[RMDB]
RNA sequence: GGGAACGACUCGAGUAGAGUCGAAAACAGUCUGUCUCACUCACACAGUCUCUGUCUCUGUCUGUCUCUCUCAGUCAGACACACAGUGUGACAGAGUCACUCUGACUCACUCUGUCACUGAGAGUCACGUGUGCCCAAAAUUCGUUUUGGGCACACGAAAAGAAACAACAACAACAAC
Reactivity to 2A3 in 0.01 (KOAc 150mM, MgCl2 10mM, bicine 150mM(pH8.5), 24C), signal-to-noise 1, nucleotides 027 to 126: c030a030g030u030c020u030g050u030c010u010c100a040c020u060c010a020c010a000c010a020g030u000c020u000c000u040g060u050c030u020c000u000g020u000c000u040g090u000c010u000c000u030c000u010c060a000g070u030c030a010g020a020c000a000c000a010c020a040g020u050g000u010g100a000c010a000g010a040g040u010c000a080c080u070c020u040g040a060c000u000c080a020c000u040c030u070g030u030c000a000c010u000g000a030g000a000g010u030c030a030
Reactivity to DMS in 0.01 (KOAc 150mM, MgCl2 10mM, bicine 150mM(pH8.5), 24C), signal-to-noise 2, nucleotides 027 to 126: c120a090g010u000c020u000g020u010c010u000c080a070c050u000c050a080c180a090c050a080g000u000c030u000c010u010g010u000c050u000c020u000g020u010c030u000g020u000c030u000c060u000c110u000c040a080g000u000c100a130g000a060c040a020c200a050c080a030g000u000g010u020g000a070c010a030g030a000g010u000c160a100c130u010c050u000g000a130c080u000c120a040c040u000c050u030g030u000c030a040c020u040g000a090g000a030g000u010c160a110